[RMDB]
RNA sequence: GGGAACGACUCGAGUAGAGUCGAAAAUGGACCACUUUGCGAACACUUUCCAGCAAUUAGGACUCAACUAUGACUUCUCGUCCAGAACCAAAAAUAGGGAAGAACUAUGGUUUAUGUCGCACCGUGGCUCAAUGACGGUCUUCGGACCGUCAUUGAGAAAAGAAACAACAACAACAAC
Reactivity to DMS in 0.01 (KOAc 150mM, MgCl2 10mM, bicine 150mM(pH8.5), 24C), signal-to-noise 1, nucleotides 027 to 126: u000g020g000a270c000c000a000c000u070u000u000g000c050g000a020a050c020a050c070u000u000u000c030c000a090g020c300a130a200u000u000a020g000g030a140c070u000c170a060a000c000u000a000u000g000a120c130u070u000c010u000c060g000u090c130c100a140g000a030a030c170c200a070a090a140a020a140u000a050g000g000g060a090a000g000a010a120c000u050a000u020g000g090u000u000u000a080u030g000u000c020g030c090a000c030c180g000u000g000g000
Reactivity to 2A3 in 0.01 (KOAc 150mM, MgCl2 10mM, bicine 150mM(pH8.5), 24C), signal-to-noise 2, nucleotides 027 to 126: u100g060g090a020c010c000a020c050u000u000u030g010c020g060a120a020c050a020c110u080u110u040c000c040a020g060c090a070a150u050u080a190g010g040a060c040u060c090a050a010c010u050a030u160g000a040c000u020u030c000u020c020g070u020c010c040a040g040a150a100c100c000a090a040a050a000a020u170a110g040g000g060a040a000g030a080a000c010u020a040u120g000g010u050u050u070a040u100g030u000c020g010c030a010c080c000g020u040g020g010
Record summary: The record gives the reactivity of an RNA of 177 nucleotides to DMS and 2A3. The 2A3 profile rests on 1,022 reads. For DMS, 829 sequencing reads were counted. Reactivities are rounded to 0.1 and cut off at 0 and 3. DMS adducts were read by reverse transcription with MarathonRT. 2A3 adducts were read by reverse transcription with SuperScript II with manganese.